[RMDB]
RNA sequence: GGGAACGACUCGAGUAGAGUCGAAAACGCAUGCGAGAGCAUGCGGCUAAGCUUCGGCUUAGUAAGAGCAACUUAGGAUUGUAGGCUCCCCGGCGUGUCUCGAACCAUGCCGGGCCAAACCCAUAGGGCUGGCGGUCCCUGUGCGGUCGAAAUUCAAUCACUAAUCACUCUUCGGAGUGAUUAGUGAAAAAGAAACAACAACAACAAC
Reactivity to 2A3 in 0.01 (KOAc 150mM, MgCl2 10mM, bicine 150mM(pH8.5), 24C), signal-to-noise 2, nucleotides 027 to 156: c000g010c000a000u000g010c010g000a020g010a020g040c000a000u000g010c000g000g020c000u000a000a000g000c000u010u220c300g090g010c000u020u000a000g000u020a060a030g000a010g020c010a010a170c040u060u110a010g020g050a070u020u080g020u070a020g060g000c010u050c050c010c000c000g000g000c000g040u010g050u020c060u020c290g070a040a040c030c000a000u000g000c000c000g010g010g000c000c000a030a020a000c000c000c000a000u010a000g020g010g000c030u050g110g080c050g070g040u120c000c000c000u010g010u010g000c130g050g000u070c030g090a070a000a000u030u040c000a000a040